Annotation
An RNA of 207 nucleotides, treated with 2A3 and DMS and read out base by base. 2A3 adducts were read by reverse transcription with SuperScript II with manganese. High 2A3 reactivity points to a flexible backbone, as in loops and unpaired stretches. The 2A3 profile rests on 5,230 reads. For DMS, 2,632 sequencing reads were counted. The reactions ran in a buffer of 150 mM KOAc, 10 mM MgCl2 and 150 mM bicine (pH 8.5), at 24 C.
RNA sequence: GGGAACGACUCGAGUAGAGUCGAAAAGGGGUCCGAAGAGGAUACAGCAAUCCACUACCCACCUCGUACUGAAGCCUCCACGGUACGAGAGGUGGAUUUCCCUGUAUCUCCCCACCUUCGGACGGAGGCACCCAAAAUGCUCGGUUCGCCGAGCAAAUAAUAGAAUUACUUUCGAGUAAUUCUAUUAAAAAGAAACAACAACAACAAC
Reactivity to 2A3 in 0.01 (KOAc 150mM, MgCl2 10mM, bicine 150mM(pH8.5), 24C), signal-to-noise 3, nucleotides 027 to 156: g040g010g030g020u000c000c000g000a000a000g000a000g010g000a000u010a010c010a000g110c090a000a000u000c000c000a010c020u050a090c060c080c020a030c020c010u000c000g010u000a000c000u040g070a250a040g010c000c000u010c000c000a000c010g010g000u000a000c000g000a000g000a000g000g000u000g000g000a000u010u030u060c020c010c000u000g000u000a010u020c020u080c060c020c020c010a030c000c010u010u010c010g000g040a040c000g000g010a000g000g000c000a030c000c010c000a020a090a030a090u100g010c020u010c010g010g040u050u050c180g030c080c000g000a000g000c000a010a010a010
Reactivity to DMS in 0.01 (KOAc 150mM, MgCl2 10mM, bicine 150mM(pH8.5), 24C), signal-to-noise 2, nucleotides 027 to 156: g020g010g060g030u010c020c010g010a020a040g020a250g010g010a010u000a030c020a060g020c090a050a050u000c000c010a030c000u000a050c020c030c070a300c000c010u000c010g030u010a010c000u010g000a060a150g020c030c010u000c010c010a300c020g000g000u000a020c000g000a060g000a180g010g000u020g010g010a030u000u000u000c160c060c010u010g060u000a050u000c010u010c300c000c000c040a300c040c000u010u010c010g010g000a050c030g010g020a090g060g020c040a210c060c040c040a050a080a060a130u000g030c010u000c000g030g000u000u010c280g010c050c010g000a020g010c010a000a010a030